Source: RMDB library OK2TST, as collected in RNAgym.
An RNA of 177 nucleotides, treated with DMS and 2A3 and read out base by base.
The DMS profile rests on 2,797 reads.

[RMDB]
RNA sequence: GGGAACGACUCGAGUAGAGUCGAAAAACCAAAGACAUUUGGACGAUUCAGAUGCAGCCGUCAACGUAUGCUGCUGCUUCAGUUAGAGCUUAGUAGUUCAACAUCUGAUGUUAGCUAGUGAGUAUACUCUAAACCUAGGGUUCGCCCUAGGUUUAGAAAAAGAAACAACAACAACAAC
Reactivity to DMS in 0.01 (KOAc 150mM, MgCl2 10mM, bicine 150mM(pH8.5), 24C), signal-to-noise 3, nucleotides 027 to 126: a100c010c010a080a080a090g020a130c140a080u000u000u000g030g010a100c070g010a110u010u000c050a100g000a040u000g020c030a040g020c020c050g030u000c100a100a080c220g000u010a030u010g020c060u000g010c010u000g010c020u000u010c080a060g010u010u010a140g010a070g000c000u000u000a060g000u000a030g000u000u000c100a000a050c080a020u010c130u020g030a050u000g000u000u000a060g020c020u000a050g010u000g000a080g000u000a160u000a080c140
Reactivity to 2A3 in 0.01 (KOAc 150mM, MgCl2 10mM, bicine 150mM(pH8.5), 24C), signal-to-noise 1, nucleotides 027 to 126: a000c010c000a040a040a000g130a030c080a100u090u120u140g090g070a060c120g100a130u130u110c050a000g040a000u050g000c020a000g000c060c010g020u080c030a100a070c060g160u170a080u210g030c050u020g000c000u000g060c000u070u050c000a040g000u040u100a010g000a000g070c010u130u090a050g050u090a020g040u150u010c080a010a000c040a020u140c090u210g080a080u030g030u050u000a000g000c020u040a010g090u050g010a000g000u030a000u000a130c000